RNA sequence: GGGAACGACUCGAGUAGAGUCGAAAACGUCAUCAUUUGUGUCACCUAUGCUUGAGAUGAAUGGUGAUGAUCGUGUGCACGUACUCCUUCGAACAGGUGCUUUCGCAGCCAUUCUCACCACUGGAAUCUGGGUGUUCACUGACCGAUCACUCAUCUCAGACCGGGAUUGAUUCGUCAAUCCCGGUCUAAAAGAAACAACAACAACAAC
Reactivity to 2A3 in 0.01 (KOAc 150mM, MgCl2 10mM, bicine 150mM(pH8.5), 24C), signal-to-noise 2, nucleotides 027 to 156: c060g050u000c000a020u020c020a000u000u020u070g020u060g140u040c030a050c050c000u170a110u300g070c110u050u050g010a040g000a100u030g020a060a010u030g000g040u000g070a020u060g040a020u120c120g020u030g040u080g120c110a020c000g070u030a070c060u090c050c000u080u070c100g080a070a040c020a110g070g010u040g040c000u020u110u110c120g040c040a030g040c010c010a060u080u040c020u020c010a030c020c020a120c100u110g000g090a060a060u060c070u080g020g060g000u000g070u050u030c080a050c070u130g050a050c020c040g040a020u070c000a000c010u010c000a110u060c060u010c030
Record summary: This 207-nucleotide RNA was probed chemically with 2A3. For 2A3, 771 sequencing reads were counted. It was measured as part of the RMDB library OK3TST. The RNA was probed in 150 mM KOAc, 10 mM MgCl2 and 150 mM bicine (pH 8.5) at 24 C.